[RMDB]
RNA sequence: GGGAACGACUCGAGUAGAGUCGAAAAGGAUUCUGGAUGGAAUUGGACGGAAAAAUAAGGUAAUUCAGAAUGAUAGAUACCUUCGUUAGAGUCAUCAUUCGCGUUAACAAACAAUGGCUUCCAUCAACACUCGACUAAUGUUCGCAUUAGUCGAGUGAAAAGAAACAACAACAACAAC
Reactivity to DMS in 0.01 (KOAc 150mM, MgCl2 10mM, bicine 150mM(pH8.5), 24C), signal-to-noise 3, nucleotides 027 to 126: g010g000a090u010u040c000u010g000g030a030u020g000g000a070a030u000u070g030g040a040c060g000g000a000a090a020a040a060u050a080a020g030g000u040a020a100u020u030c050a150g020a050a110u000g020a040u000a080g000a090u020a080c070c000u000u000c220g020u000u030a040g000a280g010u000c020a090u020c000a010u000u010c040g000c210g030u000u020a050a100c170a170a090a060c150a070a020u060g000g010c030u030u000c020c000a030u010c040a040a250
Reactivity to 2A3 in 0.01 (KOAc 150mM, MgCl2 10mM, bicine 150mM(pH8.5), 24C), signal-to-noise 4, nucleotides 027 to 126: g130g000a170u070u000c050u080g040g040a010u060g010g060a120a070u100u140g130g010a020c060g070g120a010a120a020a000a040u270a130a020g110g050u070a070a010u080u070c060a040g040a090a090u030g010a080u070a090g030a020u070a150c010c000u040u050c030g090u050u060a050g000a030g140u020c010a000u040c000a010u040u060c020g000c020g120u040u050a110a070c050a160a040a000c060a070a050u040g060g000c040u020u010c010c000a010u010c010a020a080